This 177-nucleotide RNA was probed chemically with DMS and 2A3. Reactivities are rounded to 0.1 and cut off at 0 and 3. In probing experiments dimethyl sulfate is read out at A N1 and C N3, which are open when not base-paired. 2A3 adducts were read by reverse transcription with SuperScript II with manganese. It was measured as part of the RMDB library OK2TST. The RNA was probed in 150 mM KOAc, 10 mM MgCl2 and 150 mM bicine (pH 8.5) at 24 C. The 2A3 profile rests on 1,960 reads.
RNA sequence: GGGAACGACUCGAGUAGAGUCGAAAACAGCCAGCGCAUACAAUCGCGCUCCCGUCCGUUUGUCCCGGGCAGUACCACGCCGUACUGGUAUUCGUACCGGCUGAGCAGGGUCUCCAGGGGGUGGUUGUGAUCAGUCGUAAUUCGUUACGACUGAUCAAAAAGAAACAACAACAACAAC
Reactivity to DMS in 0.01 (KOAc 150mM, MgCl2 10mM, bicine 150mM(pH8.5), 24C), signal-to-noise 2, nucleotides 027 to 126: c080a050g010c030c030a060g020c000g030c010a170u020a120c300a100a070u000c130g010c020g030c000u000c010c010c010g000u010c100c070g010u010u000u000g020u000c050c030c020g000g010g020c130a020g000u010a030c020c020a060c060g000c020c040g010u010a060c030u000g010g010u010a040u000u010c150g000u000a050c000c020g020g030c070u000g000a110g000c030a150g000g000g010u000c000u010c040c040a060g010g020g010g020g050u000g020g010u000u000g010
Reactivity to 2A3 in 0.01 (KOAc 150mM, MgCl2 10mM, bicine 150mM(pH8.5), 24C), signal-to-noise 2, nucleotides 027 to 126: c000a000g010c040c000a010g000c000g010c010a020u130a260c070a160a240u170c060g000c000g020c000u020c020c010c000g070u100c030c030g030u060u140u150g050u080c000c000c000g010g010g030c030a000g020u060a010c010c010a030c040g010c030c020g090u110a090c020u000g000g040u050a040u040u100c090g010u020a110c030c000g000g040c070u040g020a050g050c030a040g000g100g010u010c010u040c030c010a050g030g000g000g010g020u050g000g030u000u100g040